The record gives the reactivity of an RNA of 207 nucleotides to 2A3 and DMS.
[RMDB]
RNA sequence: GGGAACGACUCGAGUAGAGUCGAAAAUAUUCCGGUGUGGGAUACUUGGUAAUAUGUAACGCUAAUUGCAUCAGAUUGUAGGACGGAAUUUACAGUCUUGGUUUUUAUAAACCUGAAACUAAGUAAGAAUAGUAAGAGCGGUUCGCCGCUCUUACAACAAUAGAGCAACGUUCGCGUUGCUCUAUUGAAAAGAAACAACAACAACAAC
Reactivity to 2A3 in 0.01 (KOAc 150mM, MgCl2 10mM, bicine 150mM(pH8.5), 24C), signal-to-noise 4, nucleotides 027 to 156: u090a020u010u040c020c020g070g070u110g030u070g030g120g010a040u040a080c010u010u050g020g010u020a010a010u010a050u080g020u030a090a030c080g010c200u120a160a090u130u070g000c000a020u030c010a010g020a060u020u040g010u020a030g030g060a010c050g010g000a030a020u020u060u030a030c010a030g010u010c010u020u020g020g010u010u020u010u060u060a210u140a080a020a020c000c000u010g020a050a010a010c010u010a020a010g020u030a050a060g050a180a150u110a120g000u000a000a000g000a010g010c010g020g020u030u040c170g030c040c000g000c000u000c000u000u000a000c000a000a000
Reactivity to DMS in 0.01 (KOAc 150mM, MgCl2 10mM, bicine 150mM(pH8.5), 24C), signal-to-noise 2, nucleotides 027 to 156: u010a090u000u000c000c000g060g010u000g050u000g000g010g000a140u000a050c050u000u010g020g010u010a060a090u010a070u000g030u000a040a100c060g010c070u010a050a130u000u000g020c030a080u010c080a090g010a050u000u000g040u000a050g030g010a150c000g010g000a080a230u000u010u000a030c000a070g010u000c030u000u000g010g000u010u020u000u000u000a110u010a110a020a040c010c020u000g020a040a040a060c030u000a020a090g000u000a050a120g000a110a110u010a130g020u010a000a020g000a030g000c000g020g020u000u020c300g030c010c010g000c010u000c010u000u000a000c000a040a100

The DMS profile rests on 4,897 reads.